[RMDB]
RNA sequence: GGGAACGACUCGAGUAGAGUCGAAAAAUGUGCUAACACGUGUUAACGCCAACCAGUGCCAUAGUGCCAGUCAUAAUACUACGUGGCGUCGGCCGAUCAUGUACGUACGACCGUGCAACUACGUGCAAUUGGCUAACUGUGUACGUGAUCAUACAGCUCGCUGUGAGAAUUUCGAUUCUCACAGCGAAAAAGAAACAACAACAACAAC
Reactivity to DMS in 0.01 (KOAc 150mM, MgCl2 10mM, bicine 150mM(pH8.5), 24C), signal-to-noise 1, nucleotides 027 to 156: a080u000g050u000g000c010u020a190a160c020a050c170g020u000g000u000u020a050a020c060g040c040c020a070a000c050c050a130g000u000g000c000c060a070u000a080g030u000g010c030c060a140g000u000c100a070u020a060a180u000a040c070u000a060c030g020u000g000g020c010g000u010c120g010g020c000c020g000a050u000c040a070u000g030u010a050c060g030u000a060c050g020a040c050c050g060u020g000c020a050a080c020u000a030c060g000u000g020c020a020a100u010u010g010g020c000u000a040a040c030u010g030u000g030u000a000c020g000u000g020a120u010c040a080u000a060c020a120g000c150
Reactivity to 2A3 in 0.01 (KOAc 150mM, MgCl2 10mM, bicine 150mM(pH8.5), 24C), signal-to-noise 4, nucleotides 027 to 156: a000u100g020u050g080c030u030a110a000c030a010c100g050u040g010u120u110a150a020c090g020c040c010a010a070c030c030a080g040u020g060c020c010a100u060a150g050u120g080c020c000a030g030u060c010a030u020a190a050u090a220c040u030a040c100g050u020g000g000c030g030u080c040g050g050c030c020g010a040u060c030a070u080g030u020a000c050g000u020a020c070g030a090c050c000g060u080g040c000a030a090c020u050a050c020g050u010g030c000a020a090u050u050g000g020c000u020a060a010c040u080g030u010g020u080a000c020g020u020g010a050u040c030a050u060a120c040a050g050c020
Structure probing data (DMS and 2A3) for a 207-nucleotide construct.
The data come from the RNA Mapping Database (RMDB), library OK3TST.
The reactions ran in a buffer of 150 mM KOAc, 10 mM MgCl2 and 150 mM bicine (pH 8.5), at 24 C.